[RMDB]
This 177-nucleotide RNA was probed chemically with 2A3 and DMS. The reactions ran in a buffer of 150 mM KOAc, 10 mM MgCl2 and 150 mM bicine (pH 8.5), at 24 C. The data come from the RNA Mapping Database (RMDB), library OK1LIB.
RNA sequence: GGGAACGACUCGAGUAGAGUCGAAAAUAUACAUCAGAAGUCGGCACAACUCCCGACUCGCGGUGAGCGAUGCAGCGUAGCAUUAGCUACGCAGCUGCUGUGCGGAUGGCUAGCAAAAGCUAGCCUAGGCAUUAGGACUGUUCGCAGUCCUAAUGCCAAAAGAAACAACAACAACAAC
Reactivity to 2A3 in 0.01 (KOAc 150mM, MgCl2 10mM, bicine 150mM(pH8.5), 24C), signal-to-noise 2, nucleotides 027 to 126: u140a020u040a060c020a030u060c030a090g040a080a000g070u040c000g000g040c090a020c000a170a300c100u020c010c000c000g000a010c000u000c000g000c030g020g030u090g000a060g000c060g130a060u200g020c020a000g010c000g000u010a000g000c010a170u180u170a080g000c030u000a030c000g000c010a010g010c000u020g000c000u000g040u080g010c010g120g000a030u050g030g000c000u000a000g000c010a190a250a060a000g000c000u000a000g000c000c000u000a020
Reactivity to DMS in 0.01 (KOAc 150mM, MgCl2 10mM, bicine 150mM(pH8.5), 24C), signal-to-noise 2, nucleotides 027 to 126: u040a150u010a130c020a070u000c010a050g040a120a070g000u020c010g000g050c140a060c110a120a130c300u000c170c020c000g000a090c060u000c010g000c300g000g050u010g000a120g010c050g080a010u010g010c000a000g000c000g030u000a000g000c000a120u040u070a100g000c000u000a000c000g010c000a000g000c000u020g000c070u030g000u000g010c070g000g030a090u070g010g000c050u000a000g000c000a100a040a140a210g010c000u040a000g000c010c000u020a030